[RMDB]
RNA sequence: GGGAACGACUCGAGUAGAGUCGAAAACGGAACUUCGGUUCCGCAGAGCGUACUACAGGGAGGACAUCGAUCACUAGUGUAAGUCGAUCCCAAAUAGGAUCGACUGAGCUAGUGGGAGUCCGCGAAACCUGUAUCGCGAGUGACGCUUUCGAGCGUCUAUAUGACAGAGUUUCGACUCUGUCAUAUAAAAAGAAACAACAACAACAAC
Reactivity to DMS in 0.01 (KOAc 150mM, MgCl2 10mM, bicine 150mM(pH8.5), 24C), signal-to-noise 6, nucleotides 027 to 156: c000g020g010a010a000c010u000u000c300g060g000u000u000c010c000g030c000a050g010a210g010c030g040u000a070c080u000a020c020a040g010g010g010a160g020g010a030c010a170u000c110g000a170u010c010a020c000u000a020g020u000g000u000a300a140g010u000c000g030a020u000c010c000c000a030a150a210u010a050g000g000a010u000c010g010a020c000u000g000a280g010c000u010a020g020u000g000g010g010a090g020u000c000c000g000c080g010a100a110a170c010c010u000g010u000a000u000c020g020c010g010a190g020u010g020a000c000g040c000u000u000u010c200g000a040g030c000g020u000c000
Reactivity to 2A3 in 0.01 (KOAc 150mM, MgCl2 10mM, bicine 150mM(pH8.5), 24C), signal-to-noise 8, nucleotides 027 to 156: c010g000g020a000a000c020u080u090c260g120g000u010u000c010c000g000c010a090g040a020g010c000g010u090a110c080u000a000c020a010g010g000g020a090g030g010a020c040a270u190c090g090a070u100c020a010c000u000a010g010u020g050u220a030a010g000u000c000g000a000u030c010c010c030a140a280a180u300a080g000g000a000u000c000g020a000c000u000g000a000g000c000u000a000g000u000g010g000g000a010g010u000c000c000g000c020g020a070a040a020c000c000u020g010u030a030u300c000g000c010g000a010g030u060g010a000c000g020c000u150u120u170c290g080a010g000c000g000u000c000